[RMDB]
RNA sequence: GGGAACGACUCGAGUAGAGUCGAAAAGCCACAUAUCCCGUGACAUUGCGAAAGCAAGGCUGGCGUUAGGUAGUCCUGGGCGGCGACAGCCUUGGACUGCGGCGUAAAGGUGUACCUGGGGCCGUUAUAACGCGGUAACAGUUCGCUGUUACCGCAACCCUGUACAGUAGUUCGCUACUGUACAGGGAAAAGAAACAACAACAACAAC
Reactivity to DMS in 0.01 (KOAc 150mM, MgCl2 10mM, bicine 150mM(pH8.5), 24C), signal-to-noise 1, nucleotides 027 to 156: g040c040c040a080c170a110u000a160u000c020c010c020g000u000g000a110c060a170u000u000g010c020g010a110a160a150g020c000a030a040g050g000c000u000g000g020c040g000u000u000a090g040g020u000a020g010u000c010c010u000g010g020g040c000g000g050c050g030a090c070a130g010c020c000u020u000g000g000a010c040u000g010c010g000g010c050g000u000a040a100a050g020g010u000g000u000a080c010c010u010g020g010g000g020c020c040g030u030u000a100u010a090a100c110g000c000g000g000u000a000a000c000a020g020u000u010c230g010c000u030g010u000u010a030c010c000g000c000a000a020
Reactivity to 2A3 in 0.01 (KOAc 150mM, MgCl2 10mM, bicine 150mM(pH8.5), 24C), signal-to-noise 2, nucleotides 027 to 156: g020c020c010a040c000a060u150a030u050c010c010c010g030u070g070a040c100a170u070u090g030c020g060a160a010a010g020c040a040a010g000g010c010u030g010g000c010g030u030u080a100g000g150u030a000g040u000c010c020u020g020g010g010c000g020g050c080g050a040c080a000g000c000c030u000u020g000g010a000c000u000g000c000g030g000c020g040u070a070a080a000g030g010u050g020u070a070c010c020u010g000g000g010g010c010c000g020u040u070a110u040a180a040c090g010c000g000g010u000a000a000c000a010g050u080u080c140g020c130u000g000u000u010a000c000c000g000c000a000a000

The record gives the reactivity of an RNA of 207 nucleotides to DMS and 2A3. 2A3 adducts were read by reverse transcription with SuperScript II with manganese. For DMS, 3,370 sequencing reads were counted. DMS adducts were read by reverse transcription with MarathonRT. For 2A3, 2,151 sequencing reads were counted.